[RMDB]
RNA sequence: GGGAACGACUCGAGUAGAGUCGAAAAUCUAUUUCUCAAACUUAUCAUACUUUUUUUCAGAAAUAUGAAACUAACGUUGGGUCCCAGGGGUCUCAACUCUCUAGAGGGGAGAAACAACGCAUUGCUAUUGCUCGGGCCAUUGUACGAGAUCCUAAAAGUUAAACGGAUGUUUCGACAUCCGUUUAACAAAAGAAACAACAACAACAAC
Reactivity to 2A3 in 0.01 (KOAc 150mM, MgCl2 10mM, bicine 150mM(pH8.5), 24C), signal-to-noise 1, nucleotides 027 to 156: u000c000u030a080u050u090u040c040u000c000a130a230a120c050u240u230a110u280c040a070u110a200c060u020u090u160u090u090u200u170c080a090g070a100a110a030u080a030u060g000a040a090a040c010u130a110a040c070g000u020u020g040g000g030u030c030c010c050a030g000g010g000g010u000c000u000c000a020a070c000u000c000u000c040u050a130g010a130g070g000g090g000a030g030a000a090a040c000a070a000c110g000c040a050u130u070g000c030u080a080u240u170g010c050u080c060g000g040g000c070c000a010u050u060g000u000a030c040g000a000g000a030u050c050c020u030a000a220a000a000